[RMDB]
The data come from the RNA Mapping Database (RMDB), library OK2TST. Chemical mapping of a 177-nucleotide RNA with 2A3 and DMS. Values cover nucleotides 27 to 126. For DMS, 2,910 sequencing reads were counted.

RNA sequence: GGGAACGACUCGAGUAGAGUCGAAAAAGCUGUGCGCCUCUGGGGAACAGCAUGCAGAGAUGGUGCAGCCACCAACCGGACAGUCACCACAGCUGAUCUCAGAGCUCCGGGGCAGAUUUUGGCCAAACGUGAGAAUAUUCUUCGGAAUAUUCUCACGAAAAGAAACAACAACAACAAC
Reactivity to 2A3 in 0.01 (KOAc 150mM, MgCl2 10mM, bicine 150mM(pH8.5), 24C), signal-to-noise 3, nucleotides 027 to 126: a010g030c030u030g000u050g030c020g060c070c000u000c020u020g000g000g000g030a150a170c000a020g080c030a030u180g080c050a040g050a020g070a300u050g040g020u020g000c020a020g030c030c020a050c020c040a060a100c050c010g030g000a050c030a050g040u160c010a000c040c020a010c010a040g020c010u020g020a100u020c010u000c020a030g020a000g040c020u010c030c010g050g020g020g050c010a010g010a040u070u070u040u100g080g010c030c030a060a060a040
Reactivity to DMS in 0.01 (KOAc 150mM, MgCl2 10mM, bicine 150mM(pH8.5), 24C), signal-to-noise 3, nucleotides 027 to 126: a070g000c010u000g020u000g010c040g020c120c020u000c040u020g010g000g030g000a080a100c050a050g020c040a110u000g030c180a110g010a150g010a100u000g010g030u000g020c060a160g010c030c030a070c080c100a110a130c170c130g010g000a060c050a070g010u000c010a030c030c010a020c060a070g010c000u000g010a070u000c020u000c020a040g000a050g000c040u000c050c020g000g000g010g000c030a010g000a100u000u000u000u000g020g020c000c020a090a060a190